An RNA of 207 nucleotides, treated with DMS and 2A3 and read out base by base.
[RMDB]
RNA sequence: GGGAACGACUCGAGUAGAGUCGAAAAUGCAGACACCAGCUGAUAAUCUUGCAUUCCUGAAAGAUGUUGCACCCCUAUGGCAAGUGGCGGCUGCUGAGGCUCUGACGUGACUCCCAGGCAUGAACGCUCUCAGCUGUGUUUACCUCAGCUCCUCGGAUAAAUAGUCGGUAUUCGUACCGACUAUUUAAAAAGAAACAACAACAACAAC
Reactivity to DMS in 0.01 (KOAc 150mM, MgCl2 10mM, bicine 150mM(pH8.5), 24C), signal-to-noise 3, nucleotides 027 to 156: u000g030c030a070g020a090c030a090c050c040a090g000c030u010g010a110u000a090a060u010c040u000u000g010c030a160u000u010c040c070u010g010a120a100a110g010a090u000g010u000u000g000c010a150c030c000c030c020u000a070u010g010g010c050a080a090g020u000g020g030c020g030g000c020u000g020c020u000g010a080g030g000c050u000c060u000g020a100c070g020u000g000a120c070u000c030c020c030a080g040g000c020a090u010g000a080a060c050g010c030u000c040u010c060a060g040c020u010g020u000g010u000u010u000a070c060c030u000c020a070g030c010u000c020c010u000c000g000g030a300
Reactivity to 2A3 in 0.01 (KOAc 150mM, MgCl2 10mM, bicine 150mM(pH8.5), 24C), signal-to-noise 3, nucleotides 027 to 156: u140g000c020a010g030a030c010a020c060c030a020g050c040u060g040a090u050a300a100u020c060u100u100g000c000a040u050u120c010c010u080g080a110a100a020g040a070u170g020u080u100g030c030a070c000c020c010c020u040a110u090g040g050c040a080a110g010u030g060g000c020g010g010c020u030g000c010u020g030a030g040g000c020u000c020u070g080a050c020g040u030g050a050c010u000c020c020c000a010g000g000c010a030u050g050a110a020c070g000c030u020c000u000c020a000g010c020u030g020u000g020u070u050u070a050c020c040u020c000a000g030c010u010c000c010u020c050g050g020a020

It was measured as part of the RMDB library OK3TST.
For DMS, 7,653 sequencing reads were counted.